Background:
Chemical mapping of a 207-nucleotide RNA with DMS and 2A3. For DMS, 2,376 sequencing reads were counted. Source: RMDB library PDB130, as collected in RNAgym.
RNA sequence: GGGAACGACUCGAGUAGAGUCGAAAAUGCGAGAAGCGCCCCGUGAGCGAGGAGGUCCUGCGCCGCUUCGCCUACACCUUUGAGGACCAGGUCUCGGGCCCGGAGAUCACCUCGGAGGAGAUCGGGCUCAAGGCCCUGGCCUUCCUCAAGGAGCUGGGUAUAUCGCGAGGUUCGCCUCGCGAUAUACAAAAGAAACAACAACAACAAC
Reactivity to DMS in 0.01 (KOAc 150mM, MgCl2 10mM, bicine 150mM(pH8.5), 24C), signal-to-noise 1, nucleotides 027 to 156: u010g000c050g020a230g000a160a150g000c010g000c020c000c020c120g000u010g010a080g010c030g020a030g000g000a040g000g030u000c040c070u000g020c050g000c000c020g020c020u020u000c030g010c010c020u000a050c040a200c030c010u000u000u010g000a020g020g010a240c030c000a080g010g020u000c010u010c000g020g000g010c000c010c000g030g020a080g010a180u000c030a090c040c010u000c120g010g030a210g010g000a030g010a060u000c000g020g000g000c000u000c000a050a050g040g010c060c020c000u000g010g010c000c020u000u000c010c000u000c000a070a040g020g030a140g020c040u020g000g000
Reactivity to 2A3 in 0.01 (KOAc 150mM, MgCl2 10mM, bicine 150mM(pH8.5), 24C), signal-to-noise 2, nucleotides 027 to 156: u150g010c030g010a080g090a220a030g080c010g030c020c010c000c010g100u050g070a060g000c000g020a000g010g000a010g020g030u100c060c100u270g070c150g010c030c010g030c030u020u040c010g000c010c000u030a030c030a080c030c000u040u050u060g000a000g000g000a000c010c000a000g010g000u000c010u030c050g020g000g000c010c000c000g090g010a080g010a060u050c030a090c080c020u070c170g180g080a160g050g010a030g000a020u060c000g000g000g000c000u000c000a010a000g010g000c020c000c010u000g010g000c000c000u030u010c000c000u000c000a000a000g040g000a010g010c070u130g000g000